[RMDB]
RNA sequence: GGGAACGACUCGAGUAGAGUCGAAAAGAUAUGGAAGUCUACCCACCGCUACCUGGAGAAACUCGGAAACGAGGAACCUCCCUGUAGCGAGGACUUCCUAAGUCAAACUACCGGUUCGCCGGUAGAAUCAGUAACAAGACUUCGGUCUUGUUACUGAAAAAGAAACAACAACAACAAC
Reactivity to 2A3 in 0.01 (KOAc 150mM, MgCl2 10mM, bicine 150mM(pH8.5), 24C), signal-to-noise 1, nucleotides 027 to 126: g010a050u220a150u290g000g030a010a010g000u000c000u050a300c010c020c020a010c030c000g000c010u000a000c000c020u000g000g000a010g000a030a070a000c010u010c000g000g060a070a060a080c000g010a000g020g000a020a020c000c000u010c000c000c000u000g020u000a000g000c000g030a000g000g000a000c000u000u000c000c000u020a090a050g110u070c120a110a110a150c010u000a000c000c000g000g060u030u060c300g030c020c000g030g000u000a000g000a010a040
Reactivity to DMS in 0.01 (KOAc 150mM, MgCl2 10mM, bicine 150mM(pH8.5), 24C), signal-to-noise 2, nucleotides 027 to 126: g010a150u030a120u000g010g020a010a010g020u000c000u000a160c000c000c010a300c110c010g000c000u000a010c000c030u000g020g040a010g050a060a080a220c020u000c000g000g000a070a050a120c000g020a020g000g000a070a200c190c010u000c010c000c050u000g000u000a000g000c000g000a060g010g000a000c010u000u000c010c000u000a050a080g000u000c100a100a110a180c000u000a000c000c010g010g000u000u010c260g000c000c000g000g000u000a000g000a060a110